The record gives the reactivity of an RNA of 177 nucleotides to 2A3 and DMS. The RNA was probed in 150 mM KOAc, 10 mM MgCl2 and 150 mM bicine (pH 8.5) at 24 C.
[RMDB]
RNA sequence: GGGAACGACUCGAGUAGAGUCGAAAAGAUAUGGAUCGGAUCGUGAACUACAAGGGAGGGUCGGAAACGACCUGACUUGCACGAGUCCGAUCCUAAGUCAAAACACUGACUGUUCGCAGUCAGUGAAGAGCAAAUAUUCCUUCGGGAAUAUUUGCUCAAAAGAAACAACAACAACAAC
Reactivity to 2A3 in 0.01 (KOAc 150mM, MgCl2 10mM, bicine 150mM(pH8.5), 24C), signal-to-noise 1, nucleotides 027 to 126: g040a010u070a050u160g010g000a010u020c020g040g000a000u000c010g000u040g030a060a120c130u300a110c300a050a030g040g090g100a050g130g000g000u020c000g000g060a020a130a010c010g000a000c010c050u070g000a000c010u020u000g000c020a000c020g000a000g230u000c010c000g010a000u020c000c000u000a020a020g000u000c050a000a000a000a180c000a000c000u010g000a000c000u020g040u030u170c300g000c180a000g020u010c000a000g000u010g000a070a030
Reactivity to DMS in 0.01 (KOAc 150mM, MgCl2 10mM, bicine 150mM(pH8.5), 24C), signal-to-noise 1, nucleotides 027 to 126: g000a020u000a300u000g000g020a000u040c000g000g000a130u000c000g040u000g000a100a060c040u000a300c010a000a010g000g010g010a280g030g010g060u020c000g020g000a090a100a300c000g000a000c000c000u000g000a300c010u000u000g000c000a000c020g010a040g020u040c000c000g000a000u000c000c010u000a000a200g020u000c040a140a010a170a220c060a030c010u000g000a020c000u000g020u000u060c220g010c030a000g000u000c000a020g060u000g000a010a070